[RMDB]
RNA sequence: GGGAACGACUCGAGUAGAGUCGAAAAUAUCUAUUAAACAAAAAUUCUUCAUUGCUGCCUGCCUCCAGACCCUAGUAACCACCAUUCUGUUUUCUGUCUCUAUGAUUUUGCCUGUUCUAGGUACCUCAUGCAAGUGAAAUUGUGCAGUAUUUGUGUAGGUUUUAGUACCUUUCGAGGUACUAAAACCAAAAGAAACAACAACAACAAC
Reactivity to 2A3 in 0.01 (KOAc 150mM, MgCl2 10mM, bicine 150mM(pH8.5), 24C), signal-to-noise 1, nucleotides 027 to 156: u130a020u010c060u080a210u100u200a260a120a040c130a140a100a080a140a220u170u110c080u170u110c060a150u080u100g000c010u010g000c000c000u000g000c050c040u040c010c000a020g000a070c040c000c020u010a000g070u040a010a060c010c000a010c010c000a040u000u010c010u080g020u010u010u000u000c010u030g040u040c000u020c020u080a050u050g050a070u000u090u080u040g000c010c000u050g070u070u150c000u000a010g010g060u040a070c010c040u070c020a000u050g030c030a060a000g010u000g140a000a000a130u010u060g000u110g000c000a010g080u110a170u090u080u060g040u000g050u050a110
This 207-nucleotide RNA was probed chemically with 2A3. The 2A3 profile rests on 447 reads. It was measured as part of the RMDB library OK3TST. The reactions ran in a buffer of 150 mM KOAc, 10 mM MgCl2 and 150 mM bicine (pH 8.5), at 24 C.